[RMDB]
RNA sequence: GGGAACGACUCGAGUAGAGUCGAAAAGCUCGUGGGCGAGGUGCGGCGCCCGGACUUCCGCCCGCCGCCCGACGAGGAGAGCAGCGAGGAGGAGGAGCCCGUCUGGACCGACGACGAGGAGGAGGAAUACCUGCUACACUUUCGAGUGUAGCAGGUAAAAAGAAACAACAACAACAAC
Reactivity to DMS in 0.01 (KOAc 150mM, MgCl2 10mM, bicine 150mM(pH8.5), 24C), signal-to-noise 1, nucleotides 027 to 126: g010c020u000c010g040u010g020g000g020c010g000a140g030g000u020g010c010g010g010c300g050c040c040c020g020g000a050c130u010u000c060c000g030c000c040c000g000c070c020g000c030c010c010g030a050c040g010a040g030g000a160g020a080g020c050a050g000c010g000a130g020g000a050g010g000a090g010g000a100g000c050c040c010g010u010c020u010g010g010a130c140c100g010a050c070g020a090c070g020a090g000g010a070g020g010a090g000g000a120a140
The record gives the reactivity of an RNA of 177 nucleotides to DMS. For DMS the reverse transcriptase was MarathonRT. The DMS profile rests on 1,343 reads. The reactions ran in a buffer of 150 mM KOAc, 10 mM MgCl2 and 150 mM bicine (pH 8.5), at 24 C.